RNA sequence: GGGAACGACUCGAGUAGAGUCGAAAAGAUAUGGACGACUAAGGGAGAUUCUGGGUCGGAAACGACCCAGCGAUCUUUGAUCUUAUGUCGUCCUAAGUCAAAACGACCCACGUUCGCGUGGGUCGAAGAAUUGGUAAACGUUCGCGUUUACCAAUUCAAAAGAAACAACAACAACAAC
Reactivity to DMS in 0.01 (KOAc 150mM, MgCl2 10mM, bicine 150mM(pH8.5), 24C), signal-to-noise 2, nucleotides 027 to 126: g000a000u000a010u000g000g010a030c000g020a010c000u000a040a010g020g000g010a000g010a020u000u000c010u000g000g000g010u010c000g010g000a000a010a030c000g020a020c000c000c000a010g010c300g000a020u000c000u000u000u020g000a010u000c000u000u000a000u030g000u010c000g020u000c000c000u000a000a060g000u000c010a080a070a150a260c030g000a020c020c010c000a010c010g020u010u000c220g020c030g070u010g010g000g020u000c000g000a030a080
Reactivity to 2A3 in 0.01 (KOAc 150mM, MgCl2 10mM, bicine 150mM(pH8.5), 24C), signal-to-noise 2, nucleotides 027 to 126: g010a000u010a000u040g000g010a000c000g000a000c010u000a000a000g000g010g000a020g000a010u050u000c000u000g010g000g020u010c010g000g000a020a010a000c000g000a000c020c030c020a010g000c030g000a010u000c010u300u260u010g000a000u010c000u020u020a050u220g020u010c010g000u000c000c000u010a000a000g010u000c010a000a030a030a110c020g000a010c020c020c000a000c010g030u060u080c300g000c000g130u000g060g130g010u010c000g000a000a010
An RNA of 177 nucleotides, treated with DMS and 2A3 and read out base by base. For DMS the reverse transcriptase was MarathonRT. For DMS, 2,599 sequencing reads were counted.